RNA sequence: GGGAACGACUCGAGUAGAGUCGAAAAGAUAUGGAUAUAUCCAGAACUACUCGUCACUGUCGGAAACGACAGAAGUCGAGCUGGAGUAUAUCCUAAGUCAAAAGAUUCACUCUUCGGAGUGAAUCAAGAAGAUAGUAUCGUUCGCGAUACUAUCUUCAAAAGAAACAACAACAACAAC
Reactivity to 2A3 in 0.01 (KOAc 150mM, MgCl2 10mM, bicine 150mM(pH8.5), 24C), signal-to-noise 5, nucleotides 027 to 126: g030a030u070a040u160g000g000a010u000a000u000a010u020c010c010a000g010a100a110c250u300a110c010u190c010g020u010c020a010c080u000g000u010c000g000g060a090a070a030c020g010a010c000a000g030a130a060g030u030c010g000a010g000c000u000g010g010a040g160u050a010u000a000u010c000c000u010a160a030g070u020c030a000a020a030a260g000a000u010u000c000a010c010u010c010u070u210c300g190g000a000g000u000g010a000a000u000c000a000a020
Reactivity to DMS in 0.01 (KOAc 150mM, MgCl2 10mM, bicine 150mM(pH8.5), 24C), signal-to-noise 4, nucleotides 027 to 126: g000a040u000a300u010g000g000a010u000a000u000a030u010c000c000a010g000a080a080c090u030a300c020u000c000g020u010c040a260c000u000g000u000c000g010g000a130a060a250c000g010a020c000a000g010a080a060g020u000c000g000a020g010c000u000g000g010a040g020u010a010u000a010u000c000c010u010a040a150g000u010c050a090a080a130a130g000a010u000u000c000a000c000u000c010u000u010c200g010g000a010g020u000g000a000a000u000c000a050a080